[RMDB]
RNA sequence: GGGAACGACUCGAGUAGAGUCGAAAAUCACGGUUGUUCGCAACCGUGAAAAACUCGGCCAUCAGGCAGAAAAACAACAAAAUAAGAGAAAGAGAAUAAAAAAAAGCUAUGACUUCGGUCAUAGCAAGUGAAAGAGAAAGUUCGCUUUCUCUUUCACAAAAGAAACAACAACAACAAC
Reactivity to 2A3 in 0.01 (KOAc 150mM, MgCl2 10mM, bicine 150mM(pH8.5), 24C), signal-to-noise 3, nucleotides 027 to 126: u030c000a000c020g000g010u010u010g030u050u070c160g040c140a010a010c000c000g000u020g010a000a020a000a000a000c000u000c000g040g000c000c010a090u120c060a110g000g050c030a000g110a030a150a020a010a000c050a040a000c010a030a160a050a140u220a150a110g040a000g070a120a150a010g050a020g050a040a120u300a250a080a020a010a010a000a000a010g030c010u020a000u000g000a000c010u020u090c300g020g000u000c000a000u020a000g010c000a000a020
Reactivity to DMS in 0.01 (KOAc 150mM, MgCl2 10mM, bicine 150mM(pH8.5), 24C), signal-to-noise 2, nucleotides 027 to 126: u010c000a020c000g010g010u000u000g000u000u000c200g020c030a010a030c000c000g000u010g000a000a050a040a100a110c070u000c030g000g000c000c020a060u020c100a070g040g020c050a150g000a050a030a060a120a070c070a010a030c050a100a060a070a060u010a070a100g020a120g000a040a050a100g000a080g000a080a050u020a000a000a030a070a060a050a140a140g000c000u000a010u000g000a030c010u000u020c170g030g000u000c000a010u010a000g000c000a010a020

Source: RMDB library M2PK50, as collected in RNAgym. Chemical mapping of a 177-nucleotide RNA with 2A3 and DMS. The 2A3 profile rests on 2,113 reads. DMS adducts were read by reverse transcription with MarathonRT. The RNA was probed in 150 mM KOAc, 10 mM MgCl2 and 150 mM bicine (pH 8.5) at 24 C. 2A3 adducts were read by reverse transcription with SuperScript II with manganese. Values cover nucleotides 27 to 126.